[RMDB]
RNA sequence: GGGAACGACUCGAGUAGAGUCGAAAAGAUAUGGAUCCCUGAGAGCGAUAAGCCUAGUGUCGGAAACGACACAGGCUUUUGACGCUCGAAAGGGAUCCUAAGUCAAAGCACCUGUUCGCAGGUGCAACUACUUGAACUUGUUCGCAAGUUCAAGUAGAAAAGAAACAACAACAACAAC
Reactivity to DMS in 0.01 (KOAc 150mM, MgCl2 10mM, bicine 150mM(pH8.5), 24C), signal-to-noise 6, nucleotides 027 to 126: g010a060u010a300u000g000g000a020u000c000c010c000u000g000a300g010a010g030c010g040a170u000a020a010g010c000c000u010a160g060u000g000u010c000g010g010a170a060a270c000g020a020c000a000c000a030g000g000c000u000u000u000u000g010a190c090g030c010u010c000g000a040a050a010g000g010g020a000u000c000c000u000a010a080g020u010c060a100a130a140g000c000a010c000c000u010g010u000u020c180g020c000a010g000g000u010g010c010a020a090
Reactivity to 2A3 in 0.01 (KOAc 150mM, MgCl2 10mM, bicine 150mM(pH8.5), 24C), signal-to-noise 2, nucleotides 027 to 126: g020a010u070a060u110g000g000a010u010c000c000c020u030g040a060g010a000g020c020g060a060u020a100a000g010c000c030u140a110g010u000g000u000c010g020g050a150a070a100c010g000a010c000a000c010a010g000g000c000u010u010u010u020g010a010c010g000c000u000c010g000a050a000a000g010g040g000a010u000c000c000u000a010a000g010u000c020a010a090a090g020c000a010c000c000u000g050u100u130c300g000c070a010g000g000u000g000c000a010a000
The record gives the reactivity of an RNA of 177 nucleotides to DMS and 2A3. As a SHAPE reagent, 2A3 marks flexible, mostly unpaired nucleotides at the ribose 2'-OH. The reactions ran in a buffer of 150 mM KOAc, 10 mM MgCl2 and 150 mM bicine (pH 8.5), at 24 C. The 2A3 profile rests on 7,602 reads.